[RMDB]
RNA sequence: GGGAACGACUCGAGUAGAGUCGAAAAGGAGCUCGGCAAGCUCUUAAUCGUAGCUAGAGCUUGCGUUCGCUCUAGCUUACCACCGGAGCGAACUGUAGGGUCGGUGGUAUCGUGACUCUACAGUUAGGGCACGAUACGAUAUUGCUCUAACCGAGCAUAGCCUACGAUUAUUCGUAAUCGUAGGCUAAAAAGAAACAACAACAACAAC
Reactivity to 2A3 in 0.01 (KOAc 150mM, MgCl2 10mM, bicine 150mM(pH8.5), 24C), signal-to-noise 3, nucleotides 027 to 156: g120g000a080g000c000u010c020g010g000c070a110a050g000c010u010c010u010u080a070a040u040c050g020u030a010g030c000u010a010g010a000g000c000u060u090g120c110g110u110u080c020g000c000u000c000u000a000g010c010u010u050a030c040c020a010c030c030g000g000a010g040c030g040a080a060c040u060g060u130a040g020g040g000u030c050g020g070u060g010g030u020a000u010c020g040u020g090a180c000u000c000u010a030c030a070g020u100u030a010g030g000g000c000a010c040g020a030u040a040c010g030a020u030a090u060u080g000c000u000c010u010a050a010c010c000g000a000g000c000a010
Reactivity to DMS in 0.01 (KOAc 150mM, MgCl2 10mM, bicine 150mM(pH8.5), 24C), signal-to-noise 2, nucleotides 027 to 156: g000g050a060g030c000u010c040g040g000c050a070a180g010c000u000c020u000u010a080a130u000c070g020u010a100g000c050u000a040g000a040g000c010u000u000g020c170g050u000u010c120g000c040u000c010u000a020g000c020u000u000a080c060c110a060c030c000g030g000a050g020c030g020a070a040c020u020g020u000a100g030g000g000u020c030g010g020u000g030g000u000a000u000c040g030u000g000a110c000u000c010u000a150c040a180g010u010u000a010g010g020g040c020a020c090g020a090u000a040c030g010a110u000a160u000u000g020c010u000c000u000a200a130c030c010g010a070g030c050a220
An RNA of 207 nucleotides, treated with 2A3 and DMS and read out base by base. DMS adducts were read by reverse transcription with MarathonRT. For 2A3, 1,975 sequencing reads were counted. For 2A3 the reverse transcriptase was SuperScript II with manganese.